[RMDB]
RNA sequence: GGGAACGACUCGAGUAGAGUCGAAAAACACUGCUACGGCAGUGAGACUUUUACAAUCCUAUGAUGAGAGUUUGCGACUAGGGCGGUCAUACAUAAUCAUGGUGAUUCUAGUCAUUCUGAUGGUAAACUCCGCAUUAAUAUUCGUAUUAAUGCGGAGAAAAGAAACAACAACAACAAC
Reactivity to 2A3 in 0.01 (KOAc 150mM, MgCl2 10mM, bicine 150mM(pH8.5), 24C), signal-to-noise 9, nucleotides 027 to 126: a000c000a000c000u010g000c010u030a050c220g130g000c000a000g000u000g000a030g000a010c020u050u070u050u090a080c070a050a100u050c000c010u090a080u160g070a030u060g050a040g010a020g110u040u140u200g090c070g010a010c020u040a030g060g050g070c090g070g000u040c010a010u090a120c010a010u140a130a070u210c060a040u030g000g020u050g040a030u250u070c010u020a010g010u000c010a020u060u050c020u030g120a140u140g040g100u110a060a050a060
Reactivity to DMS in 0.01 (KOAc 150mM, MgCl2 10mM, bicine 150mM(pH8.5), 24C), signal-to-noise 7, nucleotides 027 to 126: a110c020a010c000u000g000c010u000a080c190g040g010c020a010g010u000g000a100g000a070c050u010u020u010u000a070c160a130a100u000c000c020u000a030u010g000a050u010g000a090g010a080g010u000u010u010g030c130g030a040c040u000a050g010g010g040c110g030g000u000c020a030u000a040c030a020u010a100a070u000c060a300u000g010g010u000g010a010u010u020c030u010a030g000u000c010a130u010u000c050u020g000a090u010g020g010u010a050a060a180
Chemical mapping of a 177-nucleotide RNA with 2A3 and DMS. It was measured as part of the RMDB libraries RFM100 and RFMREP. 2A3 adducts were read by reverse transcription with SuperScript II with manganese.